[RMDB]
RNA sequence: GGGAACGACUCGAGUAGAGUCGAAAAAUCAGUAAAAGUGCCUAAUCAAUCAUGUGCACACCCAUCCAGUGGGACAGGUGUCCUUUGUCCCUGGCUGUGAUGUUUAUGAGUGGUAGUGUGCUUUUCCGUCAUCACAGAAAUUCGUUUCUGUGAUGACAAAAGAAACAACAACAACAAC
Reactivity to 2A3 in 0.01 (KOAc 150mM, MgCl2 10mM, bicine 150mM(pH8.5), 24C), signal-to-noise 3, nucleotides 027 to 126: a000u020c000a010g060u110a000a020a020a010g010u010g010c020c020u090a100a100u070c020a000a040u000c010a010u020g040u080g070c020a010c010a040c040c020c000a030u010c010c000a070g090u170g050g000g040a000c000a010g060g060u150g210u300c050c000u140u130u060g000u000c000c000c000u000g040g000c020u040g030u090g120a200u010g080u010u110u030a020u020g000a020g010u000g050g000u010a020g010u020g000u000g160c050u020u000u010u000c030c020
Reactivity to DMS in 0.01 (KOAc 150mM, MgCl2 10mM, bicine 150mM(pH8.5), 24C), signal-to-noise 4, nucleotides 027 to 126: a080u010c110a130g000u000a030a010a020a030g010u000g000c010c010u000a060a060u010c020a050a050u000c020a010u000g020u000g010c200a030c030a060c030c080c020a020u000c010c010a060g010u020g020g010g000a010c020a020g010g010u010g020u010c170c090u000u000u000g010u000c000c000c000u000g000g000c180u000g000u020g010a070u000g010u000u000u010a020u000g000a020g010u000g000g000u000a030g000u010g030u000g010c010u000u000u000u000c090c130